[RMDB]
An RNA of 177 nucleotides, treated with DMS and 2A3 and read out base by base. For 2A3 the reverse transcriptase was SuperScript II with manganese. For DMS the reverse transcriptase was MarathonRT. The reactions ran in a buffer of 150 mM KOAc, 10 mM MgCl2 and 150 mM bicine (pH 8.5), at 24 C.
RNA sequence: GGGAACGACUCGAGUAGAGUCGAAAAAGCCAUCCAGGUGUCUGUGCCUGAACAUCUCAAAACACAGCCCUACAACUGGUUUUUGGGACAGUAGGGCCUGGAUGAAAGAACCCAGGGAUGCUCUCUGGAGAGAAUCAGUUUUCGAACUGAUUCUCUCAAAAGAAACAACAACAACAAC
Reactivity to DMS in 0.01 (KOAc 150mM, MgCl2 10mM, bicine 150mM(pH8.5), 24C), signal-to-noise 3, nucleotides 027 to 126: a110g030c140c000a010u000c000c000a020g010g020u000g000u010c170u010g020u020g000c060c010u000g000a080a100c140a110u000c010u000c010a010a010a020a020c050a080c020a010g000c050c060c080u020a110c250a130a210c020u000g000g010u010u000u000u010u000g010g000g010a040c080a040g010u010a110g000g000g020c010c010u010g000g000a040u000g010a100a070a110g000a200a190c010c000c000a060g000g010g000a090u010g010c100u000c040u000c050u010g000
Reactivity to 2A3 in 0.01 (KOAc 150mM, MgCl2 10mM, bicine 150mM(pH8.5), 24C), signal-to-noise 1, nucleotides 027 to 126: a010g000c010c000a010u010c010c000a000g010g000u020g200u130c070u160g250u170g130c030c000u000g050a020a030c010a030u010c010u040c010a000a020a000a000c140a040c000a100g000c120c040c040u230a110c040a100a030c010u020g030g040u030u040u050u060u030g010g010g000a000c000a030g060u070a000g030g030g000c000c000u010g050g000a020u020g040a000a060a010g020a030a010c010c020c000a010g050g010g000a050u090g010c020u040c000u000c030u190g030